[RMDB]
The data come from the RNA Mapping Database (RMDB), library OK1LIB. Structure probing data (2A3 and DMS) for a 177-nucleotide construct. For DMS, 1,896 sequencing reads were counted. The reactions ran in a buffer of 150 mM KOAc, 10 mM MgCl2 and 150 mM bicine (pH 8.5), at 24 C.

RNA sequence: GGGAACGACUCGAGUAGAGUCGAAAACGUUCAAGUUCCACUGGAAGUUAUCUUCAAAAAAUCUGUCUUGUAAGUUGCAGGUUAGGUUGAUUAUCACGUGGAGGUCAGACAUUAUCUCAGUGGCUGCGACUCCACGUACGUUCGCGUACGUGGAGUCAAAAGAAACAACAACAACAAC
Reactivity to 2A3 in 0.01 (KOAc 150mM, MgCl2 10mM, bicine 150mM(pH8.5), 24C), signal-to-noise 2, nucleotides 027 to 126: c020g060u060u090c150a090a100g060u070u000c000c000a050c020u050g030g070a080a040g030u100u100a100u040c090u060u010c000a030a030a030a030a030a090u000c080u010g210u000c020u120u180g110u150a000a220g060u110u160g040c010a000g040g080u030u070a040g010g050u000u030g030a010u070u160a090u190c010a000c160g010u010g000g040a020g000g090u030c000a010g020a140c010a130u000u070a170u200c050u040c050a050g000u000g080g040c000u010g070c030
Reactivity to DMS in 0.01 (KOAc 150mM, MgCl2 10mM, bicine 150mM(pH8.5), 24C), signal-to-noise 2, nucleotides 027 to 126: c160g000u000u010c090a250a140g010u020u000c000c020a090c030u030g020g000a020a010g030u010u020a080u000c050u000u000c040a000a050a090a080a050a070u010c000u000g000u010c040u000u000g000u070a210a190g000u030u000g000c000a020g000g010u020u020a150g000g000u050u010g010a020u010u000a060u000c090a010c080g040u010g000g010a040g000g100u000c110a030g000a070c040a000u010u000a150u040c010u040c100a070g020u010g010g010c040u010g000c270